[RMDB]
An RNA of 177 nucleotides, treated with 2A3 and DMS and read out base by base. DMS adducts were read by reverse transcription with MarathonRT. The data come from the RNA Mapping Database (RMDB), library OK2TRN. The 2A3 profile rests on 1,221 reads. The reactions ran in a buffer of 150 mM KOAc, 10 mM MgCl2 and 150 mM bicine (pH 8.5), at 24 C. Reactivities are given for positions 27 through 126.
RNA sequence: GGGAACGACUCGAGUAGAGUCGAAAAUCAAUGACUUUAGCGCAAGUCGCCAUGAAAGGGGCGUUUUGGGUGGCUUCUAAUAACGCUAAAAUGACUUCUUUUUCUAAAAAAGGCUCAUCGCCCUGCACUGCGUGAAUUUAUUCGUAAAUUCACGCAGAAAAGAAACAACAACAACAAC
Reactivity to 2A3 in 0.01 (KOAc 150mM, MgCl2 10mM, bicine 150mM(pH8.5), 24C), signal-to-noise 1, nucleotides 027 to 126: u080c010a020a140u180g040a050c040u010u050u050a040g000c050g000c000a020a010g000u000c000g000c010c000a140u110g110a050a020a030g000g000g030g000c000g020u080u010u120u000g080g050g010u000g020g000c000u050u060c030u050a130a140u110a210a000c000g000c010u020a000a060a000a070u080g070a110c030u150u190c010u060u100u020u080u050c130u090a120a160a000a020a000a000g000g000c040u040c030a070u040c020g000c000c000c000u030g000c030a080
Reactivity to DMS in 0.01 (KOAc 150mM, MgCl2 10mM, bicine 150mM(pH8.5), 24C), signal-to-noise 2, nucleotides 027 to 126: u020c060a120a110u000g030a160c130u000u000u000a030g020c000g000c010a050a010g040u000c000g010c000c020a120u010g000a030a060a040g020g010g010g020c020g070u000u000u000u010g000g010g010u000g020g000c020u000u000c300u000a070a100u030a040a170c030g010c010u000a010a020a050a060u000g000a150c110u010u000c030u010u000u000u010u000c090u020a020a060a020a010a070a050g000g000c250u000c070a040u010c040g010c000c000c030u010g000c190a110